[RMDB]
RNA sequence: GGGAACGACUCGAGUAGAGUCGAAAAACGGAAUGGGAUAUGGACAAUCAGUUUGUUAUUGAGGAACUGCACCCGGUGCUGACCAUUGAUGCCACCUUAGCCUCCCAUCCGAUUGUCAAGUCCAUUGCAUACCAUCCUCAUUCGUGAGGAUGGUAUGAAAAGAAACAACAACAACAAC
Reactivity to DMS in 0.01 (KOAc 150mM, MgCl2 10mM, bicine 150mM(pH8.5), 24C), signal-to-noise 7, nucleotides 027 to 126: a140c050g020g010a040a030u000g000g010g000a070u030a060u020g010g000a070c080a060a040u020c070a100g010u020u000u010g010u020u010a120u040u000g010a090g020g020a060a100c070u010g020c080a090c030c050c070g020g010u010g000c040u000g000a150c060c060a100u010u020g000a090u000g000c050c080a050c090c030u010u020a070g010c070c060u000c010c020c000a050u010c050c040g000a090u020u000g000u010c050a070a090g000u010c040c010a090u010u010g000
Reactivity to 2A3 in 0.01 (KOAc 150mM, MgCl2 10mM, bicine 150mM(pH8.5), 24C), signal-to-noise 9, nucleotides 027 to 126: a000c040g040g020a110a080u050g000g000g020a040u070a100u260g070g000a040c040a020a090u050c030a040g030u030u080u050g170u120u120a180u110u170g060a100g050g060a050a030c040u070g000c030a050c000c050c030g020g010u020g000c020u020g020a080c020c010a080u040u140g040a040u080g060c040c000a030c000c010u040u080a020g030c010c010u010c000c000c000a010u020c020c020g030a060u040u050g070u060c070a080a010g010u000c010c010a020u020u150g010